[RMDB]
RNA sequence: GGGAACGACUCGAGUAGAGUCGAAAAUGCAAAGCGAAAUGAUCUUACCUGUUUGGAGUUUACUCAUGGAGGGGAAGCUGUCCAUCAGUAUACAUUCUAAUACUGUUUUCCAAAACAGGAGCACCAUACUGGACCAACACAGAAAAGAUGGAAAAGAGCAUCCUCAUUUAUUCGUAAAUGAGGAUGCAAAAGAAACAACAACAACAAC
Reactivity to 2A3 in 0.01 (KOAc 150mM, MgCl2 10mM, bicine 150mM(pH8.5), 24C), signal-to-noise 6, nucleotides 027 to 156: u130g000c040a040a050a050g060c040g140a070a040a100u160g040a070u060c040u070u090a090c030c000u010g040u020u020u010g010g000a040g010u060u080u080a040c020u040c030a030u040g010g020a030g020g050g010g050a060a070g130c060u100g120u040c010c000a020u020c000a010g010u030a030u010a050c060a060u090u130c050u180a110a110u100a170c040u050g050u060u070u100u010c040c010a060a120a000a020c010a010g000g010a000g030c020a010c020c000a010u070a170c020u060g000g010a010c010c030a040a030c080a010c010a080g080a040a070a030a020g080a030u100g010g080a070a130a040a050g130a010
Reactivity to DMS in 0.01 (KOAc 150mM, MgCl2 10mM, bicine 150mM(pH8.5), 24C), signal-to-noise 2, nucleotides 027 to 156: u000g000c020a070a070a170g000c080g030a100a110a150u000g000a080u000c060u000u000a160c030c020u000g030u000u000u000g040g010a150g030u000u000u000a000c060u000c060a090u010g030g010a210g030g020g030g020a090a090g000c010u000g020u000c060c050a090u000c000a010g000u000a060u000a070c040a140u000u010c080u000a040a110u000a080c030u010g000u000u000u000u000c040c030a040a020a070a050c070a030g050g000a160g000c020a080c050c040a080u000a160c080u010g010g000a130c040c030a010a080c100a090c040a150g000a050a070a050a070g030a120u000g030g020a030a100a080a160g040a230
This 207-nucleotide RNA was probed chemically with 2A3 and DMS. The DMS profile rests on 3,299 reads. DMS adducts were read by reverse transcription with MarathonRT. For 2A3, 4,260 sequencing reads were counted.